RNA sequence: GGGAACGACUCGAGUAGAGUCGAAAACAUGUACGUGGCUUGUCAACGCGUCUAAUGUUGACCACCGUCCUGGCGGCGGGCUUUGCCAUGCAUUUUAUCAAAGGUACCCCGCCUCCUUUGAUGCCGCCGCGUACAGUCAGUUCGCUGACUGUACGCGAAAAGAAACAACAACAACAAC
Reactivity to 2A3 in 0.01 (KOAc 150mM, MgCl2 10mM, bicine 150mM(pH8.5), 24C), signal-to-noise 1, nucleotides 027 to 126: c090a030u060g000u190a030c040g000u030g000g010c000u050u080g040u000c050a040a000c000g030c020g150u140c070u140a140a130u200g000u000u000g010a030c020c020a010c050c020g030u000c020c000u030g070g020c020g030g000c010g000g030g000c000u190u140u170g030c040c010a030u060g010c050a060u100u090u070u220a080u070c010a030a040a090g070g000u120a100c060c000c000c010g040c040c020u050c030c000u030u000u040g020a050u060g060c010c020g000c000
Reactivity to DMS in 0.01 (KOAc 150mM, MgCl2 10mM, bicine 150mM(pH8.5), 24C), signal-to-noise 1, nucleotides 027 to 126: c120a060u000g000u000a040c030g030u000g000g000c050u020u000g000u000c060a050a030c010g050c220g050u010c200u010a100a070u010g000u000u010g000a080c010c220a090c200c150g000u000c020c070u010g010g010c080g000g030c020g000g000g000c100u020u010u000g000c040c010a030u000g010c090a060u000u030u010u000a080u030c000a040a000a010g000g000u000a220c300c020c010c040g020c100c060u020c010c000u010u000u000g020a000u010g010c090c020g020c000
Structure probing data (2A3 and DMS) for a 177-nucleotide construct. Reactivities are given for positions 27 through 126. 2A3 adducts were read by reverse transcription with SuperScript II with manganese. The reactions ran in a buffer of 150 mM KOAc, 10 mM MgCl2 and 150 mM bicine (pH 8.5), at 24 C. For 2A3, 1,145 sequencing reads were counted. Reactivities are rounded to 0.1 and cut off at 0 and 3. Source: RMDB library OK2TRN, as collected in RNAgym. The DMS profile rests on 1,147 reads.